RNA sequence: GGGAACGACUCGAGUAGAGUCGAAAAGAUCUAUGAUGAGACUUUCACGACGGUCUUCCGAUGUAAUACAUACCUGUGGAUAUCUUUACGUGAAGCUGAGAUCGAUGCUGGGUGUUCGCACCCAGAAGAGAGUUCAGCAGUUCGCUGCUGAACUCUCAAAAGAAACAACAACAACAAC
Reactivity to DMS in 0.01 (KOAc 150mM, MgCl2 10mM, bicine 150mM(pH8.5), 24C), signal-to-noise 2, nucleotides 027 to 126: g000a030u000c020u010a130u020g000a180u010g000a160g030a110c020u010u010u000c040a030c010g060a210c300g000g000u010c090u010u000c040c030g000a070u020g000u010a010a080u000a300c150a050u000a060c130c050u010g000u010g000g010a030u000a060u000c010u000u010u000a100c030g010u000g000a050a040g020c110u030g010a100g000a010u000c020g010a120u000g000c000u000g000g020g070u000g000u000u010c240g020c000a000c000c000c000a000g000a070a100
Reactivity to 2A3 in 0.01 (KOAc 150mM, MgCl2 10mM, bicine 150mM(pH8.5), 24C), signal-to-noise 2, nucleotides 027 to 126: g020a030u050c040u040a120u240g140a080u150g050a070g060a120c030u070u060u050c050a000c000g060a030c070g020g000u000c000u060u030c020c020g000a020u100g020u090a130a080u080a300c090a040u110a070c030c020u080g060u140g110g000a020u020a040u090c040u060u100u080a080c030g030u020g030a000a000g000c010u050g040a010g010a060u000c020g030a020u120g020c020u000g000g030g000u020g010u030u030c120g000c030a000c000c000c000a000g000a010a010